[RMDB]
Source: RMDB library TTRDEL, as collected in RNAgym.
An RNA of 177 nucleotides, treated with 2A3 and DMS and read out base by base.
DMS adducts were read by reverse transcription with MarathonRT.
Conditions: 150 mM KOAc, 10 mM MgCl2 and 150 mM bicine (pH 8.5), 24 C.

RNA sequence: GGGAACGACUCGAGUAGAGUCGAAAAGAUAUGGAUCCCAGCUUUUGACGCUCAAACCAUCGGAAACGAUGGCUAGAGCGAUAAGCCAGGAUCCUAAGUCAAAGGUUCCGAGUUCGCUCGGAACCAAGUAUAUAACGGUGUUCGCACCGUUAUAUACAAAAGAAACAACAACAACAAC
Reactivity to 2A3 in 0.01 (KOAc 150mM, MgCl2 10mM, bicine 150mM(pH8.5), 24C), signal-to-noise 6, nucleotides 027 to 126: g030a020u090a040u140g000g010a000u000c010c000c010a010g010c010u100u120u070u210g240a140c050g000c000u000c000a040a040a040c000c000a000u000c010g030g000a060a050a050c010g000a010u010g020g000c000u010a000g000a000g000c000g010a020u010a000a000g000c020c010a010g020g000a000u000c000c000u010a120a010g040u030c060a130a030a100g010g000u000u010c000c000g000a000g010u140u210c300g010c120u000c000g000g000a000a000c000c000a000a000
Reactivity to DMS in 0.01 (KOAc 150mM, MgCl2 10mM, bicine 150mM(pH8.5), 24C), signal-to-noise 6, nucleotides 027 to 126: g000a040u000a300u000g000g000a010u010c000c010c030a150g020c000u000u000u010u010g010a190c080g010c000u000c000a040a110a130c000c010a000u000c000g010g000a130a080a200c010g000a010u000g010g000c000u000a260g010a000g010c000g000a020u000a000a010g010c000c030a140g020g000a000u000c000c000u010a010a090g000u010c050a070a110a100g010g000u000u000c000c000g000a010g020u000u010c280g010c000u000c010g000g000a010a000c000c000a010a020